Structure probing data (2A3) for a 207-nucleotide construct.
Reactivities are given for positions 27 through 156.
Conditions: 150 mM KOAc, 10 mM MgCl2 and 150 mM bicine (pH 8.5), 24 C.
It was measured as part of the RMDB library RNAMAK.

[RMDB]
RNA sequence: GGGAACGACUCGAGUAGAGUCGAAAAGAUAUGGACCAGUGCCAGGCUGAUGACCAUAGGAGGUCAUCUCGGAAACGAGAUGACUCCCCACCCUAUGCAAGGCCGGUAAUACUGGUCCUAAGUCAAAGUCCAGUGGAGGUUCGCCUCCACUGGACAAGUUCUUAAGUGGGUUCGCCCACUUAAGAACAAAAGAAACAACAACAACAAC
Reactivity to 2A3 in 0.01 (KOAc 150mM, MgCl2 10mM, bicine 150mM(pH8.5), 24C), signal-to-noise 1, nucleotides 027 to 156: g020a010u060a030u170g000g000a000c000c000a000g000u010g030c080c080a190g020g010c030u030g050a270u070g010a050c020c000a000u000a000g000g000a000g000g020u000c000a000u000c010u010c000g020g020a090a060a050c000g000a000g000a010u000g010a010c020u050c040c000c000c010a010c000c000c000u010a000u000g030c020a030a180g010g000c040c010g000g030u100a200a090u150a190c000u000g010g000u000c000c000u000a050a020g010u010c050a110a040a010g000u020c000c010a000g000u000g000g010a010g020g030u120u170c260g100c090c000u000c000c010a010c000u010g010g000a000c000a000a020